[RMDB]
RNA sequence: GGGAACGACUCGAGUAGAGUCGAAAAUAUAUUCUGGCUAAAGGGCCGUUACAAGUAGGAGAUUCAGUUCUCUUGCAAGGCCAUUCUCUAGCUAAGAAUAUCCUGCAUGUCGUAGGCCCAGAUGCCCCUGAACGUUAUCGUUCGCGAUAACGUUCAGAAAAGAAACAACAACAACAAC
Reactivity to DMS in 0.01 (KOAc 150mM, MgCl2 10mM, bicine 150mM(pH8.5), 24C), signal-to-noise 1, nucleotides 027 to 126: u000a070u000a000u010u000c000u000g000g000c030u020a010a010a060g010g010g050c000c000g000u020u050a090c200a100a120g000u010a030g010g000a030g010a020u000u010c300a130g000u010u000c000u000c000u000u030g000c000a110a020g020g030c010c020a120u010u010c040u000c050u000a000g010c000u000a050a020g010a030a000u000a020u010c020c030u010g010c030a070u010g000u000c140g000u000a030g000g000c030c000c020a170g010a180u010g000c020c010c020
Reactivity to 2A3 in 0.01 (KOAc 150mM, MgCl2 10mM, bicine 150mM(pH8.5), 24C), signal-to-noise 1, nucleotides 027 to 126: u090a010u010a000u000u000c010u010g010g000c020u010a010a010a010g010g000g000c010c010g020u060u120a080c080a140a120g020u000a000g040g010a020g010a020u050u050c050a070g300u070u030c000u000c000u000u000g000c000a030a040g000g000c020c010a020u300u050c010u020c000u010a010g000c000u030a130a020g010a000a030u010a010u000c000c010u000g020c020a080u140g080u300c170g000u010a000g040g000c000c000c000a070g020a030u130g080c010c010c030